[RMDB]
RNA sequence: GGGAACGACUCGAGUAGAGUCGAAAAGAUAUGGACAAUUCAUGGGAGUGUCUUUCGGAAACGAAAGGGAGCACAUCGAUCAUGAUUGUCCUAAGUCAAAAGGUGCAUCGCUUCGGCGAUGCACCAACUUUUGGAAAUAGUUCGCUAUUUCCAAAAGAAAAGAAACAACAACAACAAC
Reactivity to 2A3 in 0.01 (KOAc 150mM, MgCl2 10mM, bicine 150mM(pH8.5), 24C), signal-to-noise 1, nucleotides 027 to 126: g000a000u000a010u050g000g010a010c000a000a000u110u030c000a100u030g020g050g000a050g000u040g220u300c000u000u000u000c010g000g000a000a000a000c010g000a000a000a000g050g000g040a120g100c000a010c010a070u300c090g020a010u020c000a010u010g010a020u020u020g000u000c010c000u000a000a000g000u000c010a080a000a000a230g000g000u000g050c000a000u020c100g000c050u060u230c300g130g040c080g000a030u000g040c090a000c030c000a000a010
Reactivity to DMS in 0.01 (KOAc 150mM, MgCl2 10mM, bicine 150mM(pH8.5), 24C), signal-to-noise 2, nucleotides 027 to 126: g000a010u000a030u010g010g000a020c020a010a000u000u010c000a000u000g010g020g010a020g040u010g000u000c000u000u000u000c000g010g000a030a000a050c010g000a010a010a020g000g000g020a300g000c000a010c000a300u010c300g020a040u000c000a000u000g010a000u000u020g000u000c000c000u010a000a070g000u000c010a120a060a080a080g000g020u000g000c000a020u000c000g050c000u010u020c250g020g030c030g000a020u000g000c000a000c000c010a010a010

Structure probing data (2A3 and DMS) for a 177-nucleotide construct. For DMS, 2,631 sequencing reads were counted.